Structure probing data (DMS and 2A3) for a 170-nucleotide construct. Reactivities are rounded to 0.1 and cut off at 0 and 3. Reactivities are given for positions 27 through 129. For 2A3 the reverse transcriptase was SuperScript II with manganese. Conditions: 150 mM KOAc, 10 mM MgCl2 and 150 mM bicine (pH 8.5), 24 C. For DMS, 25,200 sequencing reads were counted. DMS adducts were read by reverse transcription with MarathonRT.
RNA sequence: GGGAACGACUCGAGUAGAGUCGAAAAACCUGAAGAGUUCGCAAGUCAUGUUGCCAACUUCCAAAAAUCAGGUUAUAGUAAAUAUGUCACUGUUCAGGGACCACCUGGCACUGGCAAAAGUCAUUUUGAAACUCACACUUCGGUGUGAGUAAAAGAAACAACAACAACAAC
Reactivity to DMS in 0.01 (KOAc 150mM, MgCl2 10mM, bicine 150mM(pH8.5), 24C), signal-to-noise 8, nucleotides 027 to 129: a000c030c000u040g020a030a030g010a050g030u000u040c300g000c000a040a020g040u060c300a120u010g040u000u000g000c040c070a000a000c020u020u030c160c150a030a070a060a080a140u000c020a030g000g050u000u000a030u030a120g000u040a060a080a080u060a040u020g020u000c040a000c100u020g010u060u040c010a030g000g010g030a220c130c220a060c030c030u000g030g000c040a010c100u030g050g000c040a020a060a040a070g010u050c100a110u000u000u000u000g040a100a090
Reactivity to 2A3 in 0.01 (KOAc 150mM, MgCl2 10mM, bicine 150mM(pH8.5), 24C), signal-to-noise 9, nucleotides 027 to 129: a000c000c000u010g010a050a000g000a020g040u010u010c010g000c010a010a040g060u280c060a130u230g060u080u000g000c010c040a010a000c000u120u040c060c040a090a100a010a010a070u030c000a000g040g000u020u020a070u040a050g210u140a030a060a120u220a070u060g000u000c000a000c020u020g040u260u300c020a010g040g050g170a300c100c040a120c070c000u010g000g000c000a000c020u000g010g000c000a040a040a020a000g140u060c100a140u050u090u070u050g060a080a060